Structure probing data (DMS and 2A3) for a 177-nucleotide construct.
For 2A3, 50,789 sequencing reads were counted.
DMS adducts were read by reverse transcription with MarathonRT.
The reactions ran in a buffer of 150 mM KOAc, 10 mM MgCl2 and 150 mM bicine (pH 8.5), at 24 C.
High DMS reactivity at an A or C suggests that its Watson-Crick edge is free.
RNA sequence: GGGAACGACUCGAGUAGAGUCGAAAACAGUCAACGUGAAGGCGGGCCAGACCAUCGCCGCAUUCUACCAGAGCACCGUCAUGAUCUUUGGCACGAUGGCUCGCUACAUUCGUAGAGUUAGGGAAAAAUCAGUACUGAUAUUCGUAUCAGUACUGAUAAAAGAAACAACAACAACAAC
Reactivity to DMS in 0.01 (KOAc 150mM, MgCl2 10mM, bicine 150mM(pH8.5), 24C), signal-to-noise 9, nucleotides 027 to 126: c070a150g010u000c050a070a050c050g010u000g010a150a140g010g010c010g010g000g010c030c030a080g000a150c100c070a080u000c090g020c040c040g010c110a060u010u010c060u000a090c050c050a070g000a050g010c100a050c040c030g010u000c110a080u010g000a060u010c030u000u000u000g010g010c050a050c110g000a120u000g010g010c010u000c030g010c010u000a040c070a200u000u010c070g010u000a070g000a070g010u000u000a090g010g000g010a020a050a060a110
Reactivity to 2A3 in 0.01 (KOAc 150mM, MgCl2 10mM, bicine 150mM(pH8.5), 24C), signal-to-noise 9, nucleotides 027 to 126: c020a010g130u070c030a030a010c040g020u050g090a150a040g070g000c000g010g010g010c020c010a020g040a100c030c010a090u100c060g030c040c020g010c010a020u120u030c030u070a090c010c030a020g010a010g070c050a030c090c030g120u110c050a090u120g080a110u050c040u070u070u070g020g000c040a010c090g080a060u030g010g000c010u000c010g000c000u020a020c010a090u090u160c030g010u030a020g010a030g090u060u100a060g060g020g000a050a120a020a010